An RNA of 177 nucleotides, treated with 2A3 and read out base by base.
The RNA was probed in 150 mM KOAc, 10 mM MgCl2 and 150 mM bicine (pH 8.5) at 24 C.
For 2A3 the reverse transcriptase was SuperScript II with manganese.
Source: RMDB library OK1LIB, as collected in RNAgym.

RNA sequence: GGGAACGACUCGAGUAGAGUCGAAAACGCAUAUGAUUUCAAGCAACUCGUAUAUCUUCGGGAAUCGGCCCGAAAGUUUCUACCUGGCGACCUUAAUCGCCGGACUACGGGAUGCCGGAAGCAGGCUCCACGAGUAUCCGUUCGCGGAUGCUCGUGGAAAAGAAACAACAACAACAAC
Reactivity to 2A3 in 0.01 (KOAc 150mM, MgCl2 10mM, bicine 150mM(pH8.5), 24C), signal-to-noise 4, nucleotides 027 to 126: c040g030c030a090u070a130u270g150a210u060u050u060c040a110a000g010c000a030a040c000u000c020g010u020a050u010a020u060c040u020u010c010g000g010g010a040a080u060c060g060g000c000c040c000g010a010a010a000g020u110u220u060c080u130a050c020c020u030g010g010c000g000a000c000c000u050u280a000a000u020c010g000c040c000g020g010a010c010u030a030c010g000g000g030a010u030g030c020c050g080g020a020a010g030c050a010g100g000c040u000